Annotation:
This 207-nucleotide RNA was probed chemically with 2A3 and DMS. Reactivities are rounded to 0.1 and cut off at 0 and 3.
[RMDB]
RNA sequence: GGGAACGACUCGAGUAGAGUCGAAAAGUGACAAAGGAUAGUCAAGAUGAGGCAAUUUGGAAUCUCAAUCCAGCAAGCAAGUGAUAGUAUCACCCUAGUCUAAAAUAUAUAGUAGAUCAAUUAUUAGCUUGGCACUACCCCACAUACACUCCUCAACUAAUUAACACAGAUUCGUCUGUGUUAAUUAAAAAGAAACAACAACAACAAC
Reactivity to 2A3 in 0.01 (KOAc 150mM, MgCl2 10mM, bicine 150mM(pH8.5), 24C), signal-to-noise 7, nucleotides 027 to 156: g050u030g010a030c050a030a100a020g050g000a060u070a050g040u080c050a040a030g040a100u070g010a010g020g030c030a060a060u040u080u150g050g040a080a080u040c040u010c080a040a060u030c020c000a010g030c030a050a030g000c010a060a040g030u020g050a030u030a090g070u080a050u060c010a050c010c010c010u020a020g020u010c020u070a080a090a140a030u190a040u070a040u030a090g050u030a030g030a090u090c030a040a070u100u070a050u100u070a150g020c010u020u020g030g000c020a010c020u040a030c000c010c060c010a020c000a030u160a010c020a020c040u060c010c010u070c020a040a050c030
Reactivity to DMS in 0.01 (KOAc 150mM, MgCl2 10mM, bicine 150mM(pH8.5), 24C), signal-to-noise 4, nucleotides 027 to 156: g020u020g010a090c040a060a070a080g010g020a100u010a040g010u000c010a090a110g010a080u000g010a040g030g000c050a080a100u000u000u010g000g010a120a100u010c070u000c060a060a160u000c020c020a100g000c040a050a120g010c040a080a110g020u000g020a070u000a080g020u000a300u000c010a040c020c020c010u000a080g000u000c030u020a040a060a080a090u010a080u000a090u000a110g000u000a080g010a090u000c020a060a090u000u000a080u010u000a110g020c020u000u010g000g030c040a040c010u000a060c010c000c020c030a050c030a090u000a080c050a030c060u000c000c010u000c030a040a130c120
In probing experiments dimethyl sulfate is read out at A N1 and C N3, which are open when not base-paired. Conditions: 150 mM KOAc, 10 mM MgCl2 and 150 mM bicine (pH 8.5), 24 C. For DMS, 7,398 sequencing reads were counted.